[RMDB]
RNA sequence: GGGAACGACUCGAGUAGAGUCGAAAAGAUAUGGAAAUAAGGAUCUUUUGACGGCACUCUUCGGAAACGAAGAGAAUGCCGAUAAGAUCUUAUUUCCUAAGUCAAAACUAGGCGUUCGCGCCUAGAAGAAUAAUCUUUGGUUCGCCAAAGAUUAUUCAAAAGAAACAACAACAACAAC
Reactivity to 2A3 in 0.01 (KOAc 150mM, MgCl2 10mM, bicine 150mM(pH8.5), 24C), signal-to-noise 4, nucleotides 027 to 126: g000a020u020a020u080g000g020a030a000a000u030a060a120g280g030a090u000c000u060u290u190u300g300a180c030g000g000c000a000c020u000c000u010u000c010g000g000a030a030a020c010g000a000a030g010a010g000a020a040u060g000c010c010g000a010u040a020a000g000a000u000c010u000u000a010u000u010u000c000c000u000a030a000g000u010c000a020a030a170a250c010u000a010g010g010c010g040u050u080c300g020c000g020c130c000u000a000g000a010a010
Reactivity to DMS in 0.01 (KOAc 150mM, MgCl2 10mM, bicine 150mM(pH8.5), 24C), signal-to-noise 4, nucleotides 027 to 126: g000a030u000a280u010g000g010a000a010a020u000a010a040g030g010a030u000c000u000u000u000u010g010a220c070g000g010c010a090c010u000c000u000u000c010g010g000a040a060a070c010g010a010a010g010a010g000a050a050u010g020c000c000g010a070u010a010a010g000a010u000c000u010u000a000u000u000u010c000c000u000a010a110g000u010c020a140a110a130a240c010u000a000g000g020c000g010u000u020c300g020c010g010c000c000u000a000g000a110a140